[RMDB]
Overview: Source: RMDB library OK2TRN, as collected in RNAgym. An RNA of 177 nucleotides, treated with 2A3 and DMS and read out base by base.

RNA sequence: GGGAACGACUCGAGUAGAGUCGAAAACAGUCAAAGUGAAGGCGGGCCAGACCAUCGCCGCAUUCUACCAGAGCACCGUCAUGAUCUUUGGCACGAUGGCUCGCUACAUGCGAAGAGUUAGGGAAAAGGGACGCUAAUUAUUCGUAAUUAGCGUCCCAAAAGAAACAACAACAACAAC
Reactivity to 2A3 in 0.01 (KOAc 150mM, MgCl2 10mM, bicine 150mM(pH8.5), 24C), signal-to-noise 1, nucleotides 027 to 126: c040a020g030u020c030a020a000a000g040u030g090a070a000g040g000c020g000g000g040c070c040a030g030a070c030c010a100u060c100g000c070c020g050c020a020u110u000c000u090a120c020c050a040g030a020g070c090a140c140c010g020u060c040a300u170g000a060u020c020u040u040u030g000g080c000a030c020g040a100u080g060g000c030u060c010g000c050u130a060c030a120u160g020c020g030a020a000g000a030g030u060u120a090g030g000g090a020a020a010a100
Reactivity to DMS in 0.01 (KOAc 150mM, MgCl2 10mM, bicine 150mM(pH8.5), 24C), signal-to-noise 1, nucleotides 027 to 126: c130a190g030u020c060a030a190a060g020u000g000a130a110g000g010c030g000g000g000c020c100a100g000a110c090c120a050u000c120g010c040c020g020c020a020u010u000c000u000a090c060c070a080g030a040g000c090a050c030c010g030u000c150a100u000g000a080u010c010u000u010u010g020g020c000a240c200g010a120u000g000g000c090u000c000g000c000u020a020c130a050u000g020c040g000a100a000g020a030g050u010u010a060g000g020g010a060a090a080a190
The RNA was probed in 150 mM KOAc, 10 mM MgCl2 and 150 mM bicine (pH 8.5) at 24 C. For 2A3 the reverse transcriptase was SuperScript II with manganese.